[RMDB]
RNA sequence: GGGAACGACUCGAGUAGAGUCGAAAAGCGCUUGUGAUCCAAGUGACUGGGAGGCGUGUGGUGGUGGAUGGAGUGAGAGGAGGAGUCCUGGCUGAUUCUUGGCGGUGGAGACCGAGCGUCCAGGCCAAGCGUGGCGUCGACAAGGCGUCGGGACAGGCUAUUGGAUUAUGUUCGCAUAAUCCAAUAGAAAAGAAACAACAACAACAAC
Reactivity to 2A3 in 0.01 (KOAc 150mM, MgCl2 10mM, bicine 150mM(pH8.5), 24C), signal-to-noise 3, nucleotides 027 to 156: g040c000g020c030u040u030g090u140g060a090u110c060c020a030a010g000u010g110a200c030u050g030g010g030a060g030g040c100g010u180g030u090g050g030u070g020g040u060g000g060a170u100g020g010a040g030u150g030a090g000a020g000g020a050g020g010a020g040u030c000c010u010g030g000c030u070g030a110u110u050c010u000u040g000g020c020g040g100u040g030g040a070g020a070c030c040g020a040g050c130g030u000c000c000a010g020g020c000c000a010a000g020c030g030u090g000g000c010g030u020c020g010a090c030a050a080g000g000c000g000u020c000g010g010g010a020c030a020g040g000
Reactivity to DMS in 0.01 (KOAc 150mM, MgCl2 10mM, bicine 150mM(pH8.5), 24C), signal-to-noise 1, nucleotides 027 to 156: g010c120g000c010u010u010g000u010g010a230u010c160c020a030a070g000u000g030a180c030u000g010g030g000a150g040g000c050g000u010g020u000g000g020u000g030g020u000g000g020a080u000g000g000a140g010u000g000a110g000a120g010g000a120g030g010a110g000u010c010c010u000g010g080c030u020g000a070u000u000c010u030u000g000g000c010g050g000u000g040g010a160g000a170c040c050g010a070g030c050g010u000c020c040a130g010g000c000c020a030a010g030c110g030u000g010g010c000g040u000c000g020a130c130a070a120g020g000c060g040u000c000g030g000g010a080c020a100g010g010
An RNA of 207 nucleotides, treated with 2A3 and DMS and read out base by base. The 2A3 profile rests on 2,390 reads. DMS adducts were read by reverse transcription with MarathonRT. For 2A3 the reverse transcriptase was SuperScript II with manganese.